An RNA of 177 nucleotides, treated with DMS and read out base by base. For DMS the reverse transcriptase was MarathonRT. Source: RMDB library OK2TST, as collected in RNAgym. The DMS profile rests on 572 reads.
RNA sequence: GGGAACGACUCGAGUAGAGUCGAAAAGGUUUACAUGGUUCAAACACGACAAGCCUUCGAGAGAAAGCGCGGUGUUGCCUAACAACUCAUUCAAGCCGACGCCGCUUCGCGGCGCGGCUUAAUUCAGUAAGUGUACCCUAUUCGUAGGGUACACUUAAAAAGAAACAACAACAACAAC
Reactivity to DMS in 0.01 (KOAc 150mM, MgCl2 10mM, bicine 150mM(pH8.5), 24C), signal-to-noise 1, nucleotides 027 to 126: g010g000u000u000u000a210c180a090u000g030g020u000u000c110a110a010a050c050a030c020g020a110c130a100a300g010c000c020u000u000c010g010a170g000a240g000a000a060a020g050c150g000c250g010g000u000g000u000u000g010c030c000u000a230a080c210a000a010c020u010c110a090u000u030c220a030a000g000c000c000g000a090c010g250c000c000g060c040u040u010c300g100c040g050g040c030g000c030g020g000c000u000u000a010a020u000u000c100a030g030